[RMDB]
RNA sequence: GGGAACGACUCGAGUAGAGUCGAAAAGCAACUUAGGAUUUUAGGCUCCCCGUGCGUGUCUCGAACAAUGCCGGGCCAAACCCACGGGGGCUGGCGGUCCCCGUGCGGUCAAAAUCAAACCGCUGGAAAAACAGUUCUAGCUUCGGCUAGAACUGAAGUUAUUCCUGCAGUUCGCUGCAGGAAUAACAAAAGAAACAACAACAACAAC
Reactivity to 2A3 in 0.01 (KOAc 150mM, MgCl2 10mM, bicine 150mM(pH8.5), 24C), signal-to-noise 2, nucleotides 027 to 156: g040c020a020a090c070u120u120a120g100g060a180u140u090u050u130a060g020g040c020u100c030c040c000c030g050u080g060c020g020u040g000u000c090u140c230g070a080a020c030a060a090u140g010c020c010g000g030g000c020c010a080a070a010c000c000c000a010c000g010g000g000g000g010c000u000g000g000c000g000g000u000c010c000c000c010g000u000g000c050g000g000u020c010a050a060a000a120u070c020a000a180a180c010c000g010c030u040g030g000a070a030a000a000a020c000a000g000u020u000c000u000a000g000c000u030u070c240g060g000c000u010a000g000a000a000c000u000g000a000a000

The data come from the RNA Mapping Database (RMDB), library M2RFPK. Chemical mapping of a 207-nucleotide RNA with 2A3. Values cover nucleotides 27 to 156. For 2A3, 1,269 sequencing reads were counted.